[RMDB]
RNA sequence: GGGAACGACUCGAGUAGAGUCGAAAAUUUCUCCCCCCGCCUGAGGGAGAAGGAAGAGACUAAUCAGGCUAGCUGCACGGAGGCCUGUCUUUGGGCUGAAGUGCUAGCGAAAUACGAAUACAAAGACUACGCUCGUAGAAGCGUAAGUGUCGUUAUCGACGUUACAGAUCUUCGGAUCUGUAACGUCAAAAGAAACAACAACAACAAC
Reactivity to 2A3 in 0.01 (KOAc 150mM, MgCl2 10mM, bicine 150mM(pH8.5), 24C), signal-to-noise 1, nucleotides 027 to 156: u010u010u020c000u060c000c000c000c000c000c020g000c000c010u020g020a000g040g020g020a020g000a020a080g080g060a090a030g060a030g050a020c010u070a070a020u000c000a000g000g020c000u010a000g010c000u000g000c000a000c000g000g020a020g020g000c000c000u010g000u000c000u000u010u020g000g000g000c000u000g000a010a000g000u000g010c020u000a000g020c000g010a000a000a000u260a070c150g130a000a020u000a000c000a030a000a000g000a000c000u000a000c000g020c030u000c050g080u220a070g080a300a000g000c000g000u010a060a060g060u070g070u070c160g000u040u030a170u190c090